[RMDB]
The record gives the reactivity of an RNA of 207 nucleotides to 2A3 and DMS. For DMS the reverse transcriptase was MarathonRT. The 2A3 profile rests on 7,272 reads. Reactivities are rounded to 0.1 and cut off at 0 and 3. Conditions: 150 mM KOAc, 10 mM MgCl2 and 150 mM bicine (pH 8.5), 24 C.
RNA sequence: GGGAACGACUCGAGUAGAGUCGAAAAUGCUGACAUUGGCACAAUAGCCUUUCCAAAUACCCAGAAAAUUUCUGAUAAUAAGCAAAUGGAUGAACUCACAGUAGUUCAGCUGUGGUAGAUGCUCUCGUUGCUGGUUAGUACUUGUAGCAUCCAUCAAGAUUACUAAAUUAUUCGUAAUUUAGUAAUCAAAAGAAACAACAACAACAAC
Reactivity to 2A3 in 0.01 (KOAc 150mM, MgCl2 10mM, bicine 150mM(pH8.5), 24C), signal-to-noise 8, nucleotides 027 to 156: u090g000c030u040g020a060c020a180u070u080g010g010c030a040c060a120a210u110a130g000c010c000u030u050u020c050c010a080a100a050u100a070c020c020c010a030g160a030a160a060a070u140u220u050c050u030g050a040u040a240a060u090a100a020g040c030a060a070a080u120g070g010a050u040g020a050a040c010u040c050a080c020a120g130u240a030g030u100u050c040a010g000c010u030g010u030g050g030u040a030g010a030u020g000c020u000c000u000c030g150u160u060g010c010u040g060g260u110u190a020g010u010a020c010u010u020g040u130a000g000c000a010u000c010c000a030u050c030a030a050
Reactivity to DMS in 0.01 (KOAc 150mM, MgCl2 10mM, bicine 150mM(pH8.5), 24C), signal-to-noise 4, nucleotides 027 to 156: u000g030c030u010g010a110c100a110u000u000g000g000c000a080c040a120a180u000a270g000c020c010u000u010u000c030c040a070a130a150u000a120c030c010c010a180g010a100a080a100a140u000u010u000c030u000g030a150u000a080a100u000a040a120g030c070a050a090a080u010g010g000a050u000g000a020a030c020u000c020a170c140a190g020u000a020g000u000u000c020a040g010c010u000g010u000g020g030u000a030g000a040u010g010c000u000c050u000c060g030u000u000g030c000u000g010g010u010u000a060g030u000a040c050u000u000g000u010a050g020c000a050u000c020c000a080u000c030a080a200

Overview
For 2A3 the reverse transcriptase was SuperScript II with manganese.